[RMDB]
RNA sequence: GGGAACGACUCGAGUAGAGUCGAAAAUGAUGGAAUUAUACUCACUUGUUUAGCUUUAUCUUUGGACACUGGCACUCGAUGCUCUUGCGCGGCACCAGCAGCAUCAUAUUGCCCCUACCGAGCAAGACUAAUACGCAGGAUUCGUCCUGCGUAUUAGAAAAGAAACAACAACAACAAC
Reactivity to 2A3 in 0.01 (KOAc 150mM, MgCl2 10mM, bicine 150mM(pH8.5), 24C), signal-to-noise 5, nucleotides 027 to 126: u120g020a040u060g020g080a060a070u160u040a060u100a130c030u040c050a110c060u080u110g030u080u130u090a020g010c020u060u110u060a070u110c020u050u060u080g050g010a020c040a020c090u030g040g000c030a020c040u040c040g050a050u060g000c010u000c000u050u050g020c060g010c020g010g030c030a020c050c010a030g030c000a000g020c000a030u040c010a010u080a070u120u110g020c010c020c000c000u000a050c020c020g010a010g030c020a040a010g020a020
Reactivity to DMS in 0.01 (KOAc 150mM, MgCl2 10mM, bicine 150mM(pH8.5), 24C), signal-to-noise 6, nucleotides 027 to 126: u010g000a070u010g000g010a080a100u000u010a090u000a090c040u000c160a080c100u000u000g010u010u000u000a070g010c070u000u010u000a070u000c050u000u000u000g010g000a090c110a050c070u010g000g010c060a060c080u000c080g010a090u010g020c060u000c040u000u000g010c050g000c060g010g000c060a060c080c050a070g020c100a060g000c040a040u010c080a060u010a090u010u000g010c020c010c090c070u000a100c050c030g010a040g010c060a050a050g010a210